The record gives the reactivity of an RNA of 177 nucleotides to 2A3 and DMS. DMS adducts were read by reverse transcription with MarathonRT. Values cover nucleotides 27 to 126.
[RMDB]
RNA sequence: GGGAACGACUCGAGUAGAGUCGAAAAGAUAUGGACCAUGUUCUAAGAAUGUGUAGACAUGCCUUUCCCUUCGGAAACGAAGGGUAGGGCAACAGCUACACAUUCUUAGAACCGCUGGUCCUAAGUCCAACCUGUUUAACUUCGGUUAAACAGGUUGAAAAGAAACAACAACAACAAC
Reactivity to 2A3 in 0.01 (KOAc 150mM, MgCl2 10mM, bicine 150mM(pH8.5), 24C), signal-to-noise 2, nucleotides 027 to 126: g080a100u170a090u290g000g000a000c000c000a030u280g000u040u000c010u000a010a010g000a010a010u020g020u000g020u030a020g080a180c040a110u090g010c000c010u030u030u050c000c000c000u000u020c030g010g020a100a110a130c020g000a000a000g050g020g010u030a010g030g000g020c000a020a010c060a010g010c000u010a000c000a020c000a000u010u000c000u000u010a000g000a010a000c040c020g010c020u000g000g010u000c000c000u020a010a000g000u060c010
Reactivity to DMS in 0.01 (KOAc 150mM, MgCl2 10mM, bicine 150mM(pH8.5), 24C), signal-to-noise 3, nucleotides 027 to 126: g010a100u020a300u000g020g020a020c010c000a000u010g000u000u000c000u010a010a020g000a020a000u000g020u000g000u010a000g010a060c110a260u000g000c000c000u010u000u010c000c000c000u000u000c000g010g000a140a080a200c010g020a010a000g010g010g010u000a000g000g020g010c000a010a020c300a210g000c000u000a010c000a000c000a000u000u000c000u010u000a000g000a000a000c000c010g000c010u000g000g010u000c000c000u000a010a050g000u010c040